[RMDB]
RNA sequence: GGGAACGACUCGAGUAGAGUCGAAAAGAUAUGGAUUCCGACCAGGGAGCUGGGUGUCGGAAACGACACCACAGCAUCGAUCUGGUUCGGAAUCCUAAGUCAAAAGUGACGGGUUCGCCCGUCACAAUCAGAGAGGAUACUUCGGUAUCCUCUCUGAAAAAGAAACAACAACAACAAC
Reactivity to DMS in 0.01 (KOAc 150mM, MgCl2 10mM, bicine 150mM(pH8.5), 24C), signal-to-noise 3, nucleotides 027 to 126: g000a060u000a300u000g000g000a040u000u010c000c000g000a050c010c000a020g000g020g020a040g060c000u000g030g020g010u000g020u000c000g030g000a060a050a170c010g020a010c000a010c000c000a100c000a010g030c000a240u000c190g000a080u010c000u000g000g010u010u010c000g000g000a000a000u000c000c000u000a000a120g010u010c030a100a070a140a150g020u000g000a010c000g010g000g040u010u010c300g000c020c000c000g010u010c010a000c000a060a100
Reactivity to 2A3 in 0.01 (KOAc 150mM, MgCl2 10mM, bicine 150mM(pH8.5), 24C), signal-to-noise 1, nucleotides 027 to 126: g000a010u020a040u160g000g000a020u010u020c000c000g000a000c020c000a030g020g110g100a060g040c010u000g000g040g030u000g000u050c010g040g050a020a090a030c000g000a000c000a010c000c030a150c000a090g000c000a020u170c020g030a080u000c000u000g030g000u110u140c010g010g010a010a000u000c000c000u000a000a000g010u000c020a000a000a040a160g010u000g000a000c000g000g000g070u040u120c300g150c010c000c000g000u000c000a040c010a000a040

An RNA of 177 nucleotides, treated with DMS and 2A3 and read out base by base. Conditions: 150 mM KOAc, 10 mM MgCl2 and 150 mM bicine (pH 8.5), 24 C. For DMS, 3,148 sequencing reads were counted. For 2A3 the reverse transcriptase was SuperScript II with manganese. For 2A3, 3,656 sequencing reads were counted.